[RMDB]
RNA sequence: GGGAACGACUCGAGUAGAGUCGAAAAAAAAAUUCUGAAUUCUCCACCGUGUUCAAUGAAAGCCAAAAGUAGACUACAGAAGUGGUGUCUCCAGCCUUCUUUUAUACUUUCCUGAAAGAUGACACUAUACUUUGGACAAUGCAAUAAGAAAACCAAACACAUACUAAGACUUCGGUCUUAGUAUGUGAAAAGAAACAACAACAACAAC
Reactivity to 2A3 in 0.01 (KOAc 150mM, MgCl2 10mM, bicine 150mM(pH8.5), 24C), signal-to-noise 1, nucleotides 027 to 156: a000a120a060a060a070u190u030c020u000g070a080a020u060u000c000u070c060c000a150c020c000g030u090g020u160u120c090a090a090u100g040a070a010a020g000c020c000a180a000a040a000g030u020a090g020a190c060u020a120c230a140g110a160a020g120u110g020g020u000g040u020c020u030c020c040a120g040c040c060u020u100c000u000u090u040u070a090u030a060c010u070u100u010c030c080u090g020a050a020a000g010a030u190g060a020c000a020c010u060a050u080a170c000u000u090u090g020g020a030c040a050a050u050g070c020a000a080u080a140a000g080a110a070a020a020c050c020a000a000a000